Structure probing data (2A3 and DMS) for a 177-nucleotide construct. For DMS the reverse transcriptase was MarathonRT. The reactions ran in a buffer of 150 mM KOAc, 10 mM MgCl2 and 150 mM bicine (pH 8.5), at 24 C. Source: RMDB libraries RFM100 and RFMREP, as collected in RNAgym.
RNA sequence: GGGAACGACUCGAGUAGAGUCGAAAAUAAGACCGGUGCCAGCCGCCGCGGUAAUACCGGCGGCUCGAGUGGUGGCCGAUAUUAUUGAGUCUAAAGGGUCCGUAGCCGGCUUUGCAAGUCCCCUGGGAAACUUCAUAAGUUUCGACUUAUGAAGUUUAAAAGAAACAACAACAACAAC
Reactivity to 2A3 in 0.01 (KOAc 150mM, MgCl2 10mM, bicine 150mM(pH8.5), 24C), signal-to-noise 5, nucleotides 027 to 126: u070a010a010g030a040c000c000g000g020u040g020c010c020a010g000c000c000g000c000c010g060c120g010g020u050a040a020u050a130c010c000g010g000c000g000g000c000u000c000g050a080g020u140g060g030u120g060g000c000c010g060a040u030a020u150u070a070u060u160g110a070g090u010c060u150a100a100a080g090g000g000u020c020c010g010u000a010g050c000c010g020g000c020u030u040u040g030c030a070a040g080u040c000c000c010c030u060g000g030g100
Reactivity to DMS in 0.01 (KOAc 150mM, MgCl2 10mM, bicine 150mM(pH8.5), 24C), signal-to-noise 8, nucleotides 027 to 126: u010a020a020g000a070c050c000g010g010u000g000c050c060a100g020c010c000g020c000c000g000c150g000g010u000a120a090u040a260c050c000g010g000c000g010g000c010u000c050g010a100g040u020g010g020u030g010g000c000c000g010a090u010a040u010u010a080u020u010g000a180g010u020c120u010a100a130a150g000g000g020u000c020c030g010u010a150g010c020c020g000g000c010u000u000u010g000c120a100a130g000u010c010c000c000c060u010g010g010g010